Notes: Source: RMDB library OK2TRN, as collected in RNAgym. The record gives the reactivity of an RNA of 177 nucleotides to DMS and 2A3.
RNA sequence: GGGAACGACUCGAGUAGAGUCGAAAAAGCUCUGCAAGUGGAAAGGAGUGUCACACCAUGUGACGGUCACAGGGUCCUUAGAUCUAGAUCUGUACAGCGAGACUACAGUACACAUCAGUAAGGCAUGAUAUCCCACUCAAUUCGUUGAGUGGGAUAUAAAAGAAACAACAACAACAAC
Reactivity to DMS in 0.01 (KOAc 150mM, MgCl2 10mM, bicine 150mM(pH8.5), 24C), signal-to-noise 5, nucleotides 027 to 126: a070g000c020u000c020u000g010c070a100a090g020u000g010g010a090a110a090g000g000a070g020u000g000u000c040a030c060a160c190c160a110u010g020u010g010a050c040g010g010u000c010a080c100a080g000g010g000u000c020c060u000u000a050g010a060u010c080u000a100g010a040u000c070u000g020u000a030c080a080g000c070g000a120g020a090c100u000a040c050a050g000u000a050c050a030c090a030u000c050a060g000u010a050a060g010g000c120a090u000g010
Reactivity to 2A3 in 0.01 (KOAc 150mM, MgCl2 10mM, bicine 150mM(pH8.5), 24C), signal-to-noise 2, nucleotides 027 to 126: a000g000c020u030c020u040g030c000a090a160g090u060g070g070a160a120a070g060g030a050g080u100g000u000c000a020c000a040c100c110a050u190g000u020g000a050c020g040g030u040c020a020c010a080g080g010g000u070c000c010u060u030a030g000a070u070c010u050a020g000a100u010c010u020g030u020a060c000a030g050c060g130a030g020a080c030u050a030c100a030g030u020a020c070a000c000a070u050c020a020g090u070a050a000g040g010c030a020u070g020
The reactions ran in a buffer of 150 mM KOAc, 10 mM MgCl2 and 150 mM bicine (pH 8.5), at 24 C. For 2A3, 1,971 sequencing reads were counted. The DMS profile rests on 5,772 reads. For 2A3 the reverse transcriptase was SuperScript II with manganese.